[RMDB]
RNA sequence: GGGAACGACUCGAGUAGAGUCGAAAAGAUAUGGAGUUCUCGAUUCCAUGAACUACUUCGUAUGGAAGUCGGAUCGGAAACGAUCCGCUUCCAUACGAAGCAUGGACAGGAUUGAACUCCUAAGUCACACCGGUGUAUAGUUCGCUAUACACCGGUGAAAAGAAACAACAACAACAAC
Reactivity to 2A3 in 0.01 (KOAc 150mM, MgCl2 10mM, bicine 150mM(pH8.5), 24C), signal-to-noise 2, nucleotides 027 to 126: g000a000u150a060u270g000g020a040g000u010u020c020u020c000g060a290u260u020c000c000a020u020g020a050a060c010u240a040c010u300u010c000g020u000a000u030g010g040a050a000g190u300c240g000g040a020u010c030g080g040a160a120a000c000g020a000u000c000c000g000c000u000u000c020c000a030u010a040c000g050a000a000g000c000a000u010g030g020a000c010a040g180g300a300u100u280g020a060a000c000u000c000c000u000a160a060g030u000c030a000
Reactivity to DMS in 0.01 (KOAc 150mM, MgCl2 10mM, bicine 150mM(pH8.5), 24C), signal-to-noise 2, nucleotides 027 to 126: g050a070u000a300u020g020g000a030g030u000u010c020u010c020g000a270u010u020c010c000a050u000g010a050a130c060u030a300c000u000u000c010g040u000a000u000g000g000a010a000g020u010c030g060g030a010u010c010g010g000a110a080a270c000g010a000u000c000c010g010c010u000u000c000c010a000u000a010c020g000a000a000g020c000a000u000g020g000a150c300a070g000g000a100u000u010g010a010a020c000u000c000c000u000a030a040g000u000c020a230